Source information
This 177-nucleotide RNA was probed chemically with DMS and 2A3.
[RMDB]
RNA sequence: GGGAACGACUCGAGUAGAGUCGAAAACACUCUGGUGAAUCAGUAUUGUUAGCGAUGACUGGUACUAAACCUUUCAGCGUAAAUCCGCCCGUUAAUUUUUCGUAGCCUUGCAUUAACAUAACAAUACACUGCCGAAUUGAUUCGUCAAUUCGGCAGUAAAAGAAACAACAACAACAAC
Reactivity to DMS in 0.01 (KOAc 150mM, MgCl2 10mM, bicine 150mM(pH8.5), 24C), signal-to-noise 1, nucleotides 027 to 126: c070a020c060u000c060u080g000g000u000g010a130a060u000c140a070g000u030a020u020u000g000u000u000a100g000c070g000a110u010g000a080c000u000g010g000u040a000c180u030a090a200a000c090c030u000u010u000c030a010g010c030g020u060a010a090a080u060c110c010g010c010c040c000g080u000u060a060a000u000u000u000u000u000c060g020u000a080g050c040c000u000u000g030c020a090u020u000a030a050c170a050u020a120a020c050a240a040u000a030c230
Reactivity to 2A3 in 0.01 (KOAc 150mM, MgCl2 10mM, bicine 150mM(pH8.5), 24C), signal-to-noise 3, nucleotides 027 to 126: c060a000c000u070c070u080g100g000u070g040a130a120u160c040a050g020u020a050u110u030g060u020u010a030g010c030g010a010u020g030a080c000u010g000g040u070a180c070u180a070a070a150c020c000u010u040u040c040a020g000c000g040u050a080a100a060u060c010c040g030c030c010c010g060u020u070a060a100u070u100u050u000u170c040g000u010a100g010c010c000u060u140g050c030a070u170u190a120a060c060a100u100a050a000c040a000a000u000a030c050
For DMS the reverse transcriptase was MarathonRT.